Source: RMDB library TTRDEL, as collected in RNAgym. Chemical mapping of a 177-nucleotide RNA with 2A3 and DMS. DMS (dimethyl sulfate) methylates the pairing face of unpaired adenines and cytosines. Conditions: 150 mM KOAc, 10 mM MgCl2 and 150 mM bicine (pH 8.5), 24 C. The DMS profile rests on 5,855 reads. Values cover nucleotides 27 to 126.
RNA sequence: GGGAACGACUCGAGUAGAGUCGAAAAGAUAUGGAACCGUUGUAGACAUGCUUCCCUCGGAAACGAGGGUCGAGCAACAGCUACACGGUUCCUAAGUCAAAGUACUGAAGCUUCGGCUUCAGUACAAGUUUUCCAAUAUGUUCGCAUAUUGGAAAACAAAAGAAACAACAACAACAAC
Reactivity to 2A3 in 0.01 (KOAc 150mM, MgCl2 10mM, bicine 150mM(pH8.5), 24C), signal-to-noise 5, nucleotides 027 to 126: g000a000u020a010u070g000g000a000a010c020c030g040u070u260g000u010a040g050a170c160a300u110g000c000u050u050c000c000c000u000c000g000g000a020a020a010c010g000a010g000g000g010u010c140g010a000g000c010a020a110c080a170g050c010u000a000c000a000c010g000g010u000u000c000c000u000a000a000g000u000c020a000a100a140g010u010a000c000u000g000a010a000g000c010u040u200c300g140g010c010u010u000c070a000g000u000a000c000a000a010
Reactivity to DMS in 0.01 (KOAc 150mM, MgCl2 10mM, bicine 150mM(pH8.5), 24C), signal-to-noise 4, nucleotides 027 to 126: g010a000u000a160u010g000g010a020a010c000c000g010u010u000g020u000a010g000a080c120a170u010g000c000u000u000c000c000c000u000c010g000g000a050a040a080c000g000a010g000g000g010u010c270g000a010g010c010a070a150c210a150g010c000u000a000c000a020c000g010g000u000u000c000c000u000a000a070g000u000c010a100a110a150g000u000a000c000u000g000a010a000g000c000u000u010c240g020g000c000u000u000c000a000g000u000a000c000a020a060